The record gives the reactivity of an RNA of 177 nucleotides to DMS and 2A3. For 2A3, 6,261 sequencing reads were counted. Source: RMDB library OK1LIB, as collected in RNAgym.
[RMDB]
RNA sequence: GGGAACGACUCGAGUAGAGUCGAAAACACGACCGACCGGGGGCCGAUACAGCCGUCGGGGGCGCUCUCGACGAUGGCCACCAGCGGACAGUCGGAGUCGUACGUGAGAUAUACGCCGGGCGGGUAACUCUUCCUAGGAUUUCGAUCCUAGGAAGAGAAAAGAAACAACAACAACAAC
Reactivity to DMS in 0.01 (KOAc 150mM, MgCl2 10mM, bicine 150mM(pH8.5), 24C), signal-to-noise 4, nucleotides 027 to 126: c060a150c120g010a090c010c020g020a090c040c010g010g000g010g000g000c010c010g000a100u030a080c300a190g010c080c030g000u000c020g010g000g000g000g020c120g010c080u010c000u000c040g030a050c040g000a090u020g010g010c000c000a060c020c010a100g010c040g010g020a130c130a050g000u000c020g000g000a140g000u020c020g000u010a100c080g010u000g000a100g000a110u010a130u020a090c030g000c030c030g010g000g000c000g000g000g010u020a070a180
Reactivity to 2A3 in 0.01 (KOAc 150mM, MgCl2 10mM, bicine 150mM(pH8.5), 24C), signal-to-noise 6, nucleotides 027 to 126: c040a020c020g050a030c010c010g010a020c020c030g050g000g000g040g010c030c000g050a040u100a190c070a030g100c020c000g050u020c000g000g000g020g080g010c100g050c070u110c010u020c060g060a050c040g040a100u140g030g000c000c030a040c010c010a050g090c030g010g030a050c020a010g050u040c010g000g040a050g050u050c030g010u050a100c040g040u070g070a130g020a040u090a010u030a110c040g010c010c000g000g010g010c020g000g020g020u040a080a050
Description: Reactivities are given for positions 27 through 126.